[RMDB]
RNA sequence: GGGAACGACUCGAGUAGAGUCGAAAAGAUAUGGAGUGGACAGGGAGCAGCGUAUUCGGAAACGAAUACACUGCGAAGAACUGUCGUAACAUCUCCUAAGUCAAAGGUCGAACUUCGGUUCGACCAACGUAAAUGUUACGUUCGCGUAACAUUUACGAAAAGAAACAACAACAACAAC
Reactivity to 2A3 in 0.01 (KOAc 150mM, MgCl2 10mM, bicine 150mM(pH8.5), 24C), signal-to-noise 4, nucleotides 027 to 126: g000a000u020a000u050g000g000a010g030u150g060g020a000c010a010g020g000g000a020g000c000a000g000c000g020u000a000u000u010c000g000g010a000a000a000c000g000a000a000u000a000c010a010c010u010g000c000g030a180a020g000a010a010c000u000g000u000c010g010u080a110a030c040a250u090c010u000c010c000u000a020a000g000u010c070a150a100a080g000g000u000c000g000a010a010c010u050u090c300g120g000u000u000c000g000a000c000c000a000a000
Reactivity to DMS in 0.01 (KOAc 150mM, MgCl2 10mM, bicine 150mM(pH8.5), 24C), signal-to-noise 6, nucleotides 027 to 126: g000a020u000a040u010g000g000a010g030u000g010g000a010c000a010g010g000g010a020g020c000a000g020c050g020u000a010u000u000c000g010g000a010a010a030c000g010a020a000u000a010c000a010c000u000g010c000g010a050a110g010a170a180c000u000g010u000c000g030u010a080a190c230a110u020c000u000c000c000u010a010a100g000u000c000a090a090a090g010g010u000c000g010a010a010c000u000u010c210g020g000u000u000c000g010a000c000c000a020a010

Conditions: 150 mM KOAc, 10 mM MgCl2 and 150 mM bicine (pH 8.5), 24 C. This 177-nucleotide RNA was probed chemically with 2A3 and DMS. For 2A3 the reverse transcriptase was SuperScript II with manganese. For DMS, 10,866 sequencing reads were counted. It was measured as part of the RMDB library TTRDEL. DMS (dimethyl sulfate) methylates the pairing face of unpaired adenines and cytosines. For 2A3, 23,572 sequencing reads were counted.